[RMDB]
RNA sequence: GGGAACGACUCGAGUAGAGUCGAAAACGAUCCUCGAGAGAGGAUCGACGAGUCUUCGGACUCGAUUACCGCGAUGAUGUGCCGCGGGGCUACGAUGGUAUUGUGGGAAAGAAUACCAUUGUACCUUCUUGUCGUAGCCGAACAACUUGCACGUCGACGGGCUAUAGCCUUUCGAGGCUAUAGCCCGAAAAGAAACAACAACAACAAC
Reactivity to 2A3 in 0.01 (KOAc 150mM, MgCl2 10mM, bicine 150mM(pH8.5), 24C), signal-to-noise 2, nucleotides 027 to 156: c010g010a000u010c000c000u000c000g030a020g010a010g000a000g040g000a000u000c000g000a010c010g000a000g000u010c000u040u150c300g080g010a000c000u000c000g000a050u110u210a040c000c010g000c000g020a040u110g000a000u000g020u000g020c000c010g020c000g030g000g020g000c000u000a000c000g020a030u050g020g000u000a000u000u080g020u010g020g000g100a030a300a230g140a010a080u040a090c000c010a000u000u040g000u000a000c000c000u150u120c120u160u300g030u020c000g000u000a000g000c000c000g040a050a020c090a010a040c090u080u060g000c000a000c000g000u000c000g000a110